RNA sequence: GGGAACGACUCGAGUAGAGUCGAAAACCAGCUGAGCAAAGCUGAACCAAUGAACCUACCAAAAUUGGAAGUAGCCAGGGAAACAUGCCGAUAGGCAGCACAUUAACUGGGCCCAGGGGAUAAGCCUGCAUAACAUACUCUUCGGAGUAUGUUAUGCAAAAGAAACAACAACAACAAC
Reactivity to 2A3 in 0.01 (KOAc 150mM, MgCl2 10mM, bicine 150mM(pH8.5), 24C), signal-to-noise 1, nucleotides 027 to 126: c010c000a010g000c030u090g030a060g080c080a200a050a030g000c010u020g060a020a020c010c020a070a000u080g020a060a090c000c020u050a030c070c080a040a070a130a200u120u050g030g010a060a000g020u070a000g000c000c000a000g000g040g030a060a090a000c010a030u030g030c000c000g090a130u080a130g070g030c000a000g090c040a000c000a090u110u100a080a010c030u000g000g040g120c010c050c010a000g000g000g060g000a060u040a090a060g080c000c050u030
Reactivity to DMS in 0.01 (KOAc 150mM, MgCl2 10mM, bicine 150mM(pH8.5), 24C), signal-to-noise 1, nucleotides 027 to 126: c100c030a100g000c010u000g010a140g000c030a080a100a040g040c000u000g000a160a200c050c010a120a080u000g010a010a140c080c030u010a100c030c060a030a050a100a070u010u000g020g010a070a110g020u020a100g000c000c020a040g000g010g020a070a080a120c040a140u000g000c000c010g000a130u030a060g020g000c010a010g000c130a060c080a060u000u010a080a110c110u000g000g020g010c000c040c010a060g000g000g000g000a080u020a060a080g000c070c110u020